[RMDB]
RNA sequence: GGGAACGACUCGAGUAGAGUCGAAAAUCAAAGCAGCGAAGGGAUAGGCCAAGGACCAAAUAAAUAAGGGCAAACAGUCAAAUAAUAAAGACUGAGGUCCAAUAACCCGAAGCUGCAUCCCAAAAAAACUCUUAUUAUGAUUCGUCAUAAUAAGAGUAAAAGAAACAACAACAACAAC
Reactivity to DMS in 0.01 (KOAc 150mM, MgCl2 10mM, bicine 150mM(pH8.5), 24C), signal-to-noise 2, nucleotides 027 to 126: u000c150a090a160a120g020c000a010g000c020g020a110a300g000g000g000a110u010a120g010g020c030c030a120a070g030g000a020c000c030a060a100a110u030a020a040a060u030a160a080g040g000g010c050a100a100a080c000a000g000u010c020a010a110a090u000a040a060u000a160a120a120g000a010c000u000g010a080g000g000u010c000c000a070a150u000a060a100c000c000c000g010a070a300g010c010u010g000c000a050u000c000c000c000a000a000a070a160a010a050

An RNA of 177 nucleotides, treated with DMS and read out base by base.
Source: RMDB library M2PK90, as collected in RNAgym.
Conditions: 150 mM KOAc, 10 mM MgCl2 and 150 mM bicine (pH 8.5), 24 C.
Reactivities are given for positions 27 through 126.